[RMDB]
RNA sequence: GGGAACGACUCGAGUAGAGUCGAAAAUGUUUAAUCACUUUGACAGGUGCUUCUAAUUUCAAAGAUCACAUGCAUUUCUUUUCUUUUUAACACCUGUGAGUCAAAUUUGAUAGGAAGAUAAUGCACAUGAAUCCCAUACUUUCGAGUAUGGGAUUCAAAAAGAAACAACAACAACAAC
Reactivity to DMS in 0.01 (KOAc 150mM, MgCl2 10mM, bicine 150mM(pH8.5), 24C), signal-to-noise 1, nucleotides 027 to 126: u000g010u000u000u020a170a110u030c050a070c110u000u000u000g000a070c060a050g020g010u000g030c170u010u000c060u010a050a050u000u030u000c140a030a030a040g000a110u010c120a060c090a140u000g000c090a010u000u010u000c000u050u000u000u000c020u000u000u000u020u000a060a160c020a020c010c050u040g020u000g020a170g020u000c070a050a070a100u020u030u030g010a120u000a050g020g000a020a030g000a070u010a040a020u010g010c020a050c240a130